Source: RMDB libraries RFM100 and RFMREP, as collected in RNAgym. This 177-nucleotide RNA was probed chemically with DMS and 2A3. 2A3 adducts were read by reverse transcription with SuperScript II with manganese. Values cover nucleotides 27 to 126. The reactions ran in a buffer of 150 mM KOAc, 10 mM MgCl2 and 150 mM bicine (pH 8.5), at 24 C.
[RMDB]
RNA sequence: GGGAACGACUCGAGUAGAGUCGAAAAGCGCACUACAAUGAGUGGUGGUGCUAUAAGUAGUAGCCAGUCGUAGUUGGGAUUGACAUAUGUAAUUAUGUCAUGAACGUGGAAUUCCUAGUAGUUGGUACAUACCUAGUGUUUUCGAACACUAGGUAUGAAAAGAAACAACAACAACAAC
Reactivity to DMS in 0.01 (KOAc 150mM, MgCl2 10mM, bicine 150mM(pH8.5), 24C), signal-to-noise 9, nucleotides 027 to 126: g010c050g020c070a050c010u000a010c020a150a120u020g000a090g020u000g010g020u000g010g010u020g020c020u000a040u010a070a120g030u010a030g010u010a180g010c010c010a020g010u010c040g010u010a050g010u010u010g020g000g010a120u010u000g010a010c000a010u000a000u000g000u020a080a070u020u010a010u000g000u000c000a020u000g010a270a180c040g000u000g000g000a100a170u000u000c010c010u000a080g020u000a070g010u000u000g000g010u010a130
Reactivity to 2A3 in 0.01 (KOAc 150mM, MgCl2 10mM, bicine 150mM(pH8.5), 24C), signal-to-noise 8, nucleotides 027 to 126: g050c030g020c020a000c010u060a010c030a110a170u290g040a090g090u060g000g040u030g010g080u080g000c020u040a060u020a200a040g100u080a010g000u010a020g020c010c010a050g060u060c030g040u060a030g030u050u200g040g000g020a030u000u040g000a000c000a000u010a010u070g140u120a110a170u220u020a020u020g000u010c000a000u010g020a020a020c020g000u060g020g070a070a080u040u040c010c010u010a060g050u040a030g000u050u050g030g000u020a020